[RMDB]
RNA sequence: GGGAACGACUCGAGUAGAGUCGAAAAGAGCGGCCGCGACUCGUGCGCCGAUCGCGCCUGAUCGAUGGCCGGAUCCGAUCGAUCGCGAUCGUACGAUCUAGCGGUACUCGGCCCGGAUCGCGGAUCGGCCGAUAAUUAAGUUCGCUUAAUUAUCGGCAAAAGAAACAACAACAACAAC
Reactivity to 2A3 in 0.01 (KOAc 150mM, MgCl2 10mM, bicine 150mM(pH8.5), 24C), signal-to-noise 7, nucleotides 027 to 126: g090a020g060c040g020g020c000c010g020c000g010a010c010u010c020g080u130g030c150g010c030c010g010a010u040c080g000c010g010c070c040u030g000a020u010c020g020a050u060g030g000c020c020g010g000a010u000c030c060g090a180u160c060g010a020u020c060g010c010g300a020u020c010g030u070a150c020g010a000u000c020u030a010g020c020g040g010u040a060c040u010c000g000g000c000c010c000g000g010a020u010c000g000c000g000g030a180u040c010g040
Reactivity to DMS in 0.01 (KOAc 150mM, MgCl2 10mM, bicine 150mM(pH8.5), 24C), signal-to-noise 9, nucleotides 027 to 126: g000a120g020c040g010g000c010c000g010c000g010a030c040u000c010g010u000g020c190g020c060c020g010a010u000c200g020c030g010c030c050u000g000a010u000c010g010a110u000g010g020c050c020g010g000a010u000c020c120g000a130u010c150g000a030u000c020g010c010g010a020u000c030g020u000a080c020g010a010u000c010u000a150g010c000g020g010u010a090c250u000c010g010g000c000c010c030g010g000a030u000c010g010c010g000g000a050u000c020g010

Structure probing data (2A3 and DMS) for a 177-nucleotide construct. The RNA was probed in 150 mM KOAc, 10 mM MgCl2 and 150 mM bicine (pH 8.5) at 24 C. Source: RMDB library OK2TRN, as collected in RNAgym. DMS adducts were read by reverse transcription with MarathonRT.